[RMDB]
RNA sequence: GGGAACGACUCGAGUAGAGUCGAAAAGAUAUGGAUAUGAAACUUCGAAGAACCGUAACAUCUUUCGGAAACGAAAGUGGGGGAGAAGGAGUACGUAUCCUAAGUCAAAGCCCCCUUCGGGGGGCAACAUCGUGUAUAACUUCGGUUAUACACGAUGAAAAGAAACAACAACAACAAC
Reactivity to 2A3 in 0.01 (KOAc 150mM, MgCl2 10mM, bicine 150mM(pH8.5), 24C), signal-to-noise 3, nucleotides 027 to 126: g030a000u080a030u110g010g000a010u030a020u100g080a250a210a040c010u010u020c030g150a300a080g090a220a060c010c010g070u130a070a070c010a190u180c020u000u010u010c010g000g010a100a060a050c010g000a000a010a020g000u030g000g030g000g020g000a050g020a040a050g020g000a000g020u040a020c060g000u010a000u000c000c010u020a160a020g010u000c010a020a150a150g000c010c000c010c000c010u020u090c210g040g000g000g000g010g000c000a010a000
Reactivity to DMS in 0.01 (KOAc 150mM, MgCl2 10mM, bicine 150mM(pH8.5), 24C), signal-to-noise 3, nucleotides 027 to 126: g010a030u000a300u020g000g010a010u000a010u000g000a180a110a090c010u010u000c020g010a080a110g000a300a220c010c020g010u000a070a110c100a050u010c000u000u000u000c000g010g010a090a040a140c010g020a000a010a000g020u000g030g020g010g000g000a130g010a090a080g000g000a040g010u000a090c120g000u010a000u000c010c000u010a050a110g010u000c030a100a100a140g010c000c000c000c000c000u000u010c190g010g000g020g020g010g020c010a010a070
Structure probing data (2A3 and DMS) for a 177-nucleotide construct. For 2A3, 5,568 sequencing reads were counted. 2A3 adducts were read by reverse transcription with SuperScript II with manganese. The RNA was probed in 150 mM KOAc, 10 mM MgCl2 and 150 mM bicine (pH 8.5) at 24 C.